[RMDB]
RNA sequence: GGGAACGACUCGAGUAGAGUCGAAAAAGUAUCGGGUUCGCCCGAUACUGUUGGCGCGCGGCCUUUGUCCUGUCGCGCCUAUAUUGCGCGCGAUAUACGCGCAUGUGGGGUCGUUCGCGACCCCAAAGUCCCAUAUGCAUUUCGAUGCAUAUGGGACAAAAGAAACAACAACAACAAC
Reactivity to DMS in 0.01 (KOAc 150mM, MgCl2 10mM, bicine 150mM(pH8.5), 24C), signal-to-noise 1, nucleotides 027 to 126: a000g010u000a000u000c010g020g020g010u010u010c240g000c000c000c000g000a010u000a000c000u000g010u000u000g010g000c000g020c000g000c040g000g020c050c240u010u030u020g000u000c040c020u010g010u010c010g030c000g020c000c020u010a000u010a070u000u000g020c010g000c000g030c080g020a120u000a140u020a080c000g010c000g000c000a000u000g030u010g030g000g000g020u000c000g000u000u000c170g010c000g030a030c010c010c000c000a010a010a050
Reactivity to 2A3 in 0.01 (KOAc 150mM, MgCl2 10mM, bicine 150mM(pH8.5), 24C), signal-to-noise 1, nucleotides 027 to 126: a000g000u000a000u010c020g000g000g000u020u020c150g040c010c000c000g000a000u000a000c000u000g020u000u130g010g000c010g010c010g000c000g020g050c010c070u100u110u210g070u070c010c000u060g130u220c030g000c010g000c000c000u010a080u040a030u010u100g050c030g020c000g000c010g040a070u030a020u030a300c000g010c010g120c060a030u000g100u100g060g000g000g010u010c050g000u070u030c160g020c030g090a010c020c000c000c000a000a010a010